[RMDB]
RNA sequence: GGGAACGACUCGAGUAGAGUCGAAAAACUGCGGUAUUCGUACCGCAGUACAUAAAAAGGAUAAAUUACCAGUAGCCCGAAACGCAAGCGAGCACUACUGGCGCAAGAACCACUUCGGUGGUUCUAACUCCACUAUACCUUUCGAGGUAUAGUGGAGAAAAGAAACAACAACAACAAC
Reactivity to DMS in 0.01 (KOAc 150mM, MgCl2 10mM, bicine 150mM(pH8.5), 24C), signal-to-noise 2, nucleotides 027 to 126: a040c000u000g000c000g000g010u000a010u000u030c260g050u000a000c000c000g020c000a010g020u000a010c120a070u010a090a030a070a060a080g010g000a190u010a050a070a070u000u000a080c000c000a020g000u000a050g010c140c090c020g000a070a030a060c060g000c220a090a070g010c030g000a080g050c060a140c020u000a010c010u000g000g000c130g030c200a050a020g000a000a000c010c010a010c000u000u000c230g040g040u000g010g020u000u000c000u000a030a100
Reactivity to 2A3 in 0.01 (KOAc 150mM, MgCl2 10mM, bicine 150mM(pH8.5), 24C), signal-to-noise 3, nucleotides 027 to 126: a000c000u000g010c010g000g020u030a030u020u060c170g030u040a040c000c000g020c000a000g000u010a010c010a040u270a010a120a010a010a000g110g020a070u150a180a170a050u150u110a100c010c000a010g000u000a000g010c030c050c060g070a140a110a010c070g000c080a000a110g100c050g120a040g050c020a020c060u030a000c010u020g020g000c020g010c020a060a000g000a000a000c000c000a010c040u030u040c150g080g000u000g000g000u000u000c000u010a000a010